Structure probing data (2A3 and DMS) for a 177-nucleotide construct. The 2A3 profile rests on 3,847 reads. It was measured as part of the RMDB library TTRDEL. For 2A3 the reverse transcriptase was SuperScript II with manganese. The reactions ran in a buffer of 150 mM KOAc, 10 mM MgCl2 and 150 mM bicine (pH 8.5), at 24 C.

RNA sequence: GGGAACGACUCGAGUAGAGUCGAAAAGAUAUGGACUCAGCUUUUGACGGGAGGUACUCGGAAACGAGUAUUCUCCCGAUAAGCUGGUCCUAAGUCAAAGUUGCAUAUGGUUCGCCAUAUGCAACAACAUAGUCACCUCGUUCGCGAGGUGACUAUGAAAAGAAACAACAACAACAAC
Reactivity to 2A3 in 0.01 (KOAc 150mM, MgCl2 10mM, bicine 150mM(pH8.5), 24C), signal-to-noise 2, nucleotides 027 to 126: g020a010u110a040u150g000g000a000c030u030c300a000g030c000u090u160u220u230g300a220c090g000g000g000a000g000g000u000a000c000u020c010g010g000a070a050a010c020g010a000g010u010a000u060u060c000u010c000c000c000g000a000u000a000a000g000c010u000g000g040u000c000c000u000a070a010g030u010c040a100a040a060g000u020u000g000c010a010u000a000u000g060g060u030u120c300g060c120c020a000u010a010u000g000c010a000a000c000a000a010
Reactivity to DMS in 0.01 (KOAc 150mM, MgCl2 10mM, bicine 150mM(pH8.5), 24C), signal-to-noise 1, nucleotides 027 to 126: g010a050u010a300u000g000g000a000c000u030c010a000g020c000u010u000u010u010g000a160c180g010g010g010a010g000g000u000a000c000u000c000g000g000a070a060a190c010g020a010g010u000a010u000u010c010u000c010c010c010g000a020u010a000a010g000c000u000g010g010u010c000c000u000a020a070g000u000c040a080a080a130g020u000u000g000c000a010u000a000u010g000g020u010u030c300g020c000c000a000u000a000u000g000c000a000a000c010a040a130